[RMDB]
An RNA of 177 nucleotides, treated with 2A3 and DMS and read out base by base. For 2A3, 1,546 sequencing reads were counted. DMS adducts were read by reverse transcription with MarathonRT.
RNA sequence: GGGAACGACUCGAGUAGAGUCGAAAAAAGCCUUGGCUUGGAAUUCCUGCCACUACCUGUGGGGUCUGAGCCUCCCUUUAACAGAGGGUAUUUCCUCCUCCUGCCCCAGAGUGGGUGUAGCCAGCUGAGGAUGAUUAGGAUUCGUCCUAAUCAUCCUAAAAGAAACAACAACAACAAC
Reactivity to 2A3 in 0.01 (KOAc 150mM, MgCl2 10mM, bicine 150mM(pH8.5), 24C), signal-to-noise 2, nucleotides 027 to 126: a000a000g090c010c010u040u070g020g010c010u030u040g000g050a060a070u240u060c010c000u060g130c040c010a070c050u120a120c030c080u120g040u090g110g010g000g030u000c030u040g030a030g010c010c010u080c010c000c000u030u230u060a090a040c060a010g030a030g050g020g000u030a150u040u090u060c010c020u010c000c010u010c000c000u040g030c040c030c000c020a040g070a010g120u180g040g000g000u030g020u000a020g000c010c030a020g030c040u030g010
Reactivity to DMS in 0.01 (KOAc 150mM, MgCl2 10mM, bicine 150mM(pH8.5), 24C), signal-to-noise 3, nucleotides 027 to 126: a060a070g010c090c100u000u000g020g000c010u000u000g020g010a110a150u000u010c020c010u000g000c080c090a080c060u000a080c130c040u000g010u000g000g010g000g000u000c090u000g010a050g010c080c020u010c010c010c020u010u000u010a090a110c290a140g000a050g000g010g010u010a110u000u010u000c020c010u000c040c020u000c010c010u000g000c020c010c000c040a100g000a040g020u010g000g010g020u000g020u000a080g010c020c020a080g020c070u010g010